[RMDB]
RNA sequence: GGGAACGACUCGAGUAGAGUCGAAAAGGAGUAUCCGAGAGGCGCAGCACACAGCUCAUGGCAAUCGCAAAAGAUCUGCCCCGCUCUUGUUCCAAUGACUCACCAUUCAAAGAUGACACUAUCGAGGUCAAUCACCUACGUUCGCGUAGGUGAUUGAAAAAGAAACAACAACAACAAC
Reactivity to 2A3 in 0.01 (KOAc 150mM, MgCl2 10mM, bicine 150mM(pH8.5), 24C), signal-to-noise 1, nucleotides 027 to 126: g020g010a070g030u040a050u050c020c040g020a030g010a030g080g000c060g000c080a010g020c000a020c010a010c020a070g020c010u080c060a080u050g020g000c000a020a040u060c050g000c100a150a060a080a000g050a030u050c050u060g000c000c000c020c000g000c010u020c010u020u070g010u100u000c030c000a050a070u080g030a030c000u000c020a060c010c000a060u140u140c090a110a060a050g120a090u090g010a020c010a030c090u080a060u150c040g020a030g020g030
Reactivity to DMS in 0.01 (KOAc 150mM, MgCl2 10mM, bicine 150mM(pH8.5), 24C), signal-to-noise 2, nucleotides 027 to 126: g000g030a110g020u010a050u010c090c030g040a080g000a110g030g000c090g000c080a030g010c090a150c070a100c140a040g020c010u000c060a080u000g000g020c030a080a040u000c060g000c040a080a060a090a130g000a060u000c150u000g020c020c000c170c140g000c040u000c050u000u010g010u000u000c030c020a060a080u020g030a070c050u010c040a050c030c050a070u000u000c200a080a070a070g000a090u020g010a060c050a090c020u000a060u000c060g020a070g010g010
Structure probing data (2A3 and DMS) for a 177-nucleotide construct. It was measured as part of the RMDB library OK2TST. DMS adducts were read by reverse transcription with MarathonRT. The RNA was probed in 150 mM KOAc, 10 mM MgCl2 and 150 mM bicine (pH 8.5) at 24 C.